[RMDB]
RNA sequence: GGGAACGACUCGAGUAGAGUCGAAAAGGGCGAUGAGACGCUGGCUAGGUUCGUGAGCGAGGUUGGGCCGCUCACUUACGGGCAGACUGCAUAUAUUUACAACAAUCUUAUCUACGCUAUCCCACUUGAGUAUGGCCAUUCAACUCAAAGUCCGCGAAGCUCUCGAAAAUUUCGAUUUUCGAGAGCUAAAAGAAACAACAACAACAAC
Reactivity to DMS in 0.01 (KOAc 150mM, MgCl2 10mM, bicine 150mM(pH8.5), 24C), signal-to-noise 2, nucleotides 027 to 156: g000g000g040c010g020a200u020g030a070g010a050c050g010c130u010g020g070c070u000a120g000g030u000u000c050g000u000g000a010g040c010g020a040g040g000u000u000g020g010g060c060c080g030c000u010c000a030c020u010u000a020c060g040g000g030c010a120g000a070c060u010g000c050a120u010a140u000a150u000u000u000a140c050a050a060c060a030a040u000c010u000u010a110u010c050u000a090c010g030c000u000a110u000c010c000c010a100c080u000u000g000a060g000u000a090u000g030g010c010c060a120u000u010c080a080a050c000u000c020a030a060a250g010u000c040c000g010c030g000a110
Reactivity to 2A3 in 0.01 (KOAc 150mM, MgCl2 10mM, bicine 150mM(pH8.5), 24C), signal-to-noise 3, nucleotides 027 to 156: g070g000g000c020g030a020u030g030a030g020a030c090g010c110u050g040g070c000u070a110g030g150u000u040c020g000u000g000a010g000c030g000a040g090g000u120u120g050g020g030c010c000g030c010u000c000a000c000u020u050a020c040g000g000g030c030a030g030a110c020u070g050c130a020u130a030u030a120u140u230u160a090c050a120a020c030a040a060u060c030u070u030a050u050c040u060a060c110g000c030u030a060u050c000c000c000a000c010u030u040g000a010g010u090a170u110g030g000c070c030a040u120u160c030a060a030c010u000c000a050a030a000g020u020c010c010g010c000g060a010